Record summary:
An RNA of 177 nucleotides, treated with 2A3 and DMS and read out base by base. The RNA was probed in 150 mM KOAc, 10 mM MgCl2 and 150 mM bicine (pH 8.5) at 24 C. For 2A3, 2,571 sequencing reads were counted. DMS adducts were read by reverse transcription with MarathonRT.
[RMDB]
RNA sequence: GGGAACGACUCGAGUAGAGUCGAAAAGGAGUACUCUUCGGAGUACUCCAGCUACCGAGAAUCUUCCUCGGUAUAUAAAAGAAACCCUUGGAUACAAGGGAAAUACGGCAGGGUUCGCCCUGCCGAAGGUUAAAGAAUUCUUCGGAAUUCUUUAACCAAAAGAAACAACAACAACAAC
Reactivity to 2A3 in 0.01 (KOAc 150mM, MgCl2 10mM, bicine 150mM(pH8.5), 24C), signal-to-noise 2, nucleotides 027 to 126: g000g010a010g030u040a010c000u040c010u050u110c300g030g000a000g000u000a000c000u030c000c000a000g010c010u010a000c000c000g010a000g010a020a090u100c070u150u050c140c000u000c000g000g000u030a050u000a000u030a210a070a010a020g070a090a110a040c000c000c000u010u000g110g060a230u140a300c010a000a000g000g000g010a000a090a000u050a000c010g000g030c000a010g030g000g000u050u080c070g100c010c010c000u000g000c000c000g000a000a000
Reactivity to DMS in 0.01 (KOAc 150mM, MgCl2 10mM, bicine 150mM(pH8.5), 24C), signal-to-noise 2, nucleotides 027 to 126: g030g000a010g020u010a000c010u000c000u000u010c180g010g000a020g020u000a000c000u000c000c010a010g010c130u000a010c000c000g000a000g010a100a140u000c150u020u000c100c000u000c020g000g000u010a010u000a060u020a070a030a090a110g000a170a160a130c000c000c000u000u000g000g000a190u020a140c000a000a000g000g000g000a030a030a070u010a110c030g010g010c000a000g000g010g020u000u020c250g010c000c000c000u000g000c000c000g020a020a020